An RNA of 207 nucleotides, treated with 2A3 and DMS and read out base by base. 2A3 adducts were read by reverse transcription with SuperScript II with manganese. Reactivities are given for positions 27 through 156. DMS adducts were read by reverse transcription with MarathonRT.
RNA sequence: GGGAACGACUCGAGUAGAGUCGAAAAUUGAAGCGCUGAGGUAUAACCUACACAUUUCCCAGUCUAAAAACUCUGAGAAGUUGCAAAAAUGCCUCGAGUUGAUGCAAGUUCUUGACGCCAAGAAGCCACUGGAAGAGCAGAGAUACGCACUUUGUAGGAACUAUAUGGUCUUCGGACCAUAUAGUUCAAAAGAAACAACAACAACAAC
Reactivity to 2A3 in 0.01 (KOAc 150mM, MgCl2 10mM, bicine 150mM(pH8.5), 24C), signal-to-noise 2, nucleotides 027 to 156: u020u020g040a000a010g080c030g010c100u050g040a040g040g010u080a120u080a220a080c010c020u050a050c070a000c000a060u020u020u020c010c000c000a020g040u000c040u060a040a090a090a100a100c010u010c090u120g030a010g000a070a010g040u070u060g030c020a090a130a050a050a020u070g020c000c000u050c050g050a060g010u040u050g050a030u060g000c020a090a020g020u020u020c000u030u060g020a040c070g040c020c010a050a040g000a050a010g040c010c020a040c020u020g000g020a050a010g010a090g000c020a010g030a010g000a060u050a110c030g030c030a040c020u100u090u140g080u130a040g020
Reactivity to DMS in 0.01 (KOAc 150mM, MgCl2 10mM, bicine 150mM(pH8.5), 24C), signal-to-noise 2, nucleotides 027 to 156: u000u010g010a140a090g000c030g030c000u020g030a040g050g020u000a030u010a090a150c050c020u000a050c050a100c070a090u000u010u000c000c010c040a170g020u000c020u020a050a090a120a150a100c020u000c040u020g020a060g030a050a080g000u000u010g000c000a030a090a120a090a110u000g020c040c000u000c060g000a090g010u000u000g020a090u020g000c010a070a110g000u010u000c070u000u000g020a100c110g000c090c040a050a060g010a070a090g000c020c050a060c070u000g020g010a110a100g030a100g040c030a040g020a090g010a090u010a070c060g000c030a090c090u020u000u000g000u020a210g030
For 2A3, 851 sequencing reads were counted.